[RMDB]
This 177-nucleotide RNA was probed chemically with DMS and 2A3.
RNA sequence: GGGAACGACUCGAGUAGAGUCGAAAAGUGAUGACGAUAGUAAGUCAGCAGGUGGAAGCACUUGUACGGUGGUUACUGCAGCCUCAUAUACAUGAAUGACUGAUGUAGAGUUCGGUUGGAGCGACAAUAUAAUGUCGUGGUUCGCCACGACAUUAUAAAAAGAAACAACAACAACAAC
Reactivity to DMS in 0.01 (KOAc 150mM, MgCl2 10mM, bicine 150mM(pH8.5), 24C), signal-to-noise 6, nucleotides 027 to 126: g010u010g000a080u010g010a010c010g020a130u010a080g010u030a090a110g020u000c020a070g010c040a030g000g020u000g010g000a130a060g000c030a030c060u010u010g000u010a080c110g020g000u000g010g000u000u010a040c060u010g010c060a080g000c020c020u000c050a050u010a140u010a060c070a040u010g000a100a070u010g000a070c080u010g010a040u010g000u000a080g010a100g020u010u020c100g010g020u000u000g000g000a100g010c040g000a080c080a040a110
Reactivity to 2A3 in 0.01 (KOAc 150mM, MgCl2 10mM, bicine 150mM(pH8.5), 24C), signal-to-noise 5, nucleotides 027 to 126: g120u060g040a070u050g010a000c050g000a010u070a080g070u050a130a050g010u020c010a020g000c010a000g030g090u050g040g050a090a050g070c010a010c030u050u040g060u070a020c040g040g010u050g020g040u050u020a050c030u050g030c010a020g040c010c010u030c010a040u100a010u060a070c070a040u130g110a180a040u100g020a040c040u030g020a060u070g070u080a030g030a020g110u060u010c030g020g030u030u040g030g020a030g030c030g020a020c050a030a010